[RMDB]
Overview: Source: RMDB library TTRINS, as collected in RNAgym. Structure probing data (DMS and 2A3) for a 177-nucleotide construct. DMS (dimethyl sulfate) methylates the pairing face of unpaired adenines and cytosines. For DMS the reverse transcriptase was MarathonRT. The RNA was probed in 150 mM KOAc, 10 mM MgCl2 and 150 mM bicine (pH 8.5) at 24 C.
RNA sequence: GGGAACGACUCGAGUAGAGUCGAAAAGAUAUGGAUUACGUACCCUCAUCGAUCUGGUUAGGUACGUAACAUCUUUCGGAAACGAAAGUGGUACCUAACCAGGGAGAGGAAGAAGUAAUCCUAAGUCCUAAAGAGAAUGCUUCGGCAUUCUCUUUAGAAAAGAAACAACAACAACAAC
Reactivity to DMS in 0.01 (KOAc 150mM, MgCl2 10mM, bicine 150mM(pH8.5), 24C), signal-to-noise 4, nucleotides 027 to 126: g000a090u000a290u000g000g000a010u010u000a000c000g030u000a200c300c010c000u000c000a300u010c190g010a080u020c000u000g000g000u000u000a010g010g000u000a010c000g020u000a020a060c210a020u010c000u000u000u000c000g020g010a140a130a220c010g010a020a010a010g030u000g040g000u000a000c010c000u000a010a010c000c000a000g000g010g000a050g020a010g020g000a020a030g010a130a220g000u000a000a000u000c000c000u000a030a110g000u010c040
Reactivity to 2A3 in 0.01 (KOAc 150mM, MgCl2 10mM, bicine 150mM(pH8.5), 24C), signal-to-noise 2, nucleotides 027 to 126: g060a010u130a040u290g020g000a020u010u000a010c020g040u070a040c020c010c020u000c040a290u300c010g060a040u010c010u010g010g020u000u000a020g000g010u020a020c010g040u010a040a000c010a130u180c010u020u000u000c000g060g010a130a090a120c000g010a000a000a000g010u020g000g000u020a020c010c000u000a000a000c010c000a000g000g000g010a030g010a000g000g020a050a020g030a040a000g000u010a000a000u000c000c000u000a200a020g080u050c000